Structure probing data (2A3 and DMS) for a 177-nucleotide construct. The 2A3 profile rests on 1,197 reads. DMS adducts were read by reverse transcription with MarathonRT. It was measured as part of the RMDB library M2PK50. The RNA was probed in 150 mM KOAc, 10 mM MgCl2 and 150 mM bicine (pH 8.5) at 24 C.
[RMDB]
RNA sequence: GGGAACGACUCGAGUAGAGUCGAAAAACAUUAAGUUUCGACUUAAUGUAAACCCGAUGAAGCGGCACAUACGGAGCUUCUUACAUCUAAGAGUGCAAAUAAAAAGUUGAUCCUUCGGGAUCAACAAGACACUCCUAUGGUUCGCCAUAGGAGUGUCAAAAGAAACAACAACAACAAC
Reactivity to 2A3 in 0.01 (KOAc 150mM, MgCl2 10mM, bicine 150mM(pH8.5), 24C), signal-to-noise 2, nucleotides 027 to 126: a000c010a000u000u000a030a010g000u030u000u100c150g060a030c000u000u000a010a010u010g000u020a060a010a010c020c010c000g020a040u110g020a020a030g040c020g000g060c070a010c030a120u300a100c150g160g090a030g000c000u000u000c010u010u080a050c000a060u040c040u080a090a020g080a020g110u120g080c040a000a000a170u210a040a100a020a020a020g020u020u010g010a000u020c000c010u030u020c250g060g030g000a010u000c000a000a010c000a020a000
Reactivity to DMS in 0.01 (KOAc 150mM, MgCl2 10mM, bicine 150mM(pH8.5), 24C), signal-to-noise 1, nucleotides 027 to 126: a010c010a010u000u000a010a000g000u000u000u000c250g000a050c000u000u000a020a000u000g010u000a030a120a090c000c000c000g000a040u000g000a020a050g070c020g000g020c020a020c010a190u000a110c190g000g000a150g000c000u020u010c020u020u020a110c070a040u020c090u000a030a120g010a090g000u010g000c110a100a100a130u010a010a070a100a190a120g000u000u000g000a000u000c000c000u000u020c140g050g000g010a010u000c000a010a000c000a100a070